[RMDB]
RNA sequence: GGGAACGACUCGAGUAGAGUCGAAAAGAAUCCUGAUGUUUCGACAUCAGGAUUCAAAAAACCUUUGUGUAGGGAGCCGUCAACUGCCCAUUGGGUUUGAGUGGCGUUGAUCUACACUCUGGUAAAAAAUACUUAGCUGAUUCGUCAGCUAAGUAAACUGCUGACUUAAGUUCGCUUAAGUCAGCAGAAAAGAAACAACAACAACAAC
Reactivity to 2A3 in 0.01 (KOAc 150mM, MgCl2 10mM, bicine 150mM(pH8.5), 24C), signal-to-noise 1, nucleotides 027 to 156: g000a010a010u000c000c000u000g010a000u000g020u030u140u120c150g110a050c010a010u000c000a000g000g000a000u000u000c000a000a000a000a000a000a000c040c010u020u000u000g020u000g000u010a000g040g000g000a010g060c040c040g030u100c000a080a070c040u050g030c010c040c120a300u220u300g070g030g060u220u240u210g170a280g070u080g000g030c000g040u060u020g000a070u010c000u000a000c000a000c000u000c010u000g000g040u080a150a000a000a050a000a000u000a000c000u040u010a000g000c010u000g010a040u060u100c170g080u000c090a000g000c000u000a000a000g000u000a000a000a000